[RMDB]
RNA sequence: GGGAACGACUCGAGUAGAGUCGAAAACUGCUCUCUAAACAGGAGGAAAUGGUCCAGAAAUUUGUGGAGGAAGUUCUCAGGAUCAACUACAAAUUCUUAAUGUCGCCAAUCAAGACUGAGCAACGGCGUUAGCGUCUGAGUUCGCUCAGACGCUAACAAAAGAAACAACAACAACAAC
Reactivity to DMS in 0.01 (KOAc 150mM, MgCl2 10mM, bicine 150mM(pH8.5), 24C), signal-to-noise 1, nucleotides 027 to 126: c090u020g010c010u010c060u010c030u000a110a130a090c250a200g020g000a080g000g010a060a100a090u000g000g000u000c040c040a050g000a050a050a090u000u000u000g040u000g020g010a030g000g010a070a120g010u000u010c060u000c130a040g020g010a060u000c060a020a060c080u000a010c090a050a050a100u000u000c040u010u000a060a050u020g000u000c030g000c010c000a110a150u010c080a020a090g010a130c130u000g000a030g040c140a100a180c070g010g010c030
Reactivity to 2A3 in 0.01 (KOAc 150mM, MgCl2 10mM, bicine 150mM(pH8.5), 24C), signal-to-noise 1, nucleotides 027 to 126: c000u010g000c000u000c010u000c010u060a080a050a050c030a080g030g010a020g000g070a020a170a170u090g050g020u000c020c010a030g150a020a100a030u210u200u110g020u130g000g080a040g030g050a080a030g000u010u050c090u030c020a040g000g030a020u020c020a020a030c010u190a060c040a030a170a170u040u000c010u070u120a090a080u100g020u060c020g010c070c030a020a030u110c000a000a150g130a300c070u060g010a000g050c000a000a010c000g040g030c010
Annotation: Source: RMDB library OK2TRN, as collected in RNAgym. An RNA of 177 nucleotides, treated with DMS and 2A3 and read out base by base. Values are in units of 0.01, from 0 to 300, in steps of 10. Reactivities are given for positions 27 through 126. For DMS the reverse transcriptase was MarathonRT. The RNA was probed in 150 mM KOAc, 10 mM MgCl2 and 150 mM bicine (pH 8.5) at 24 C.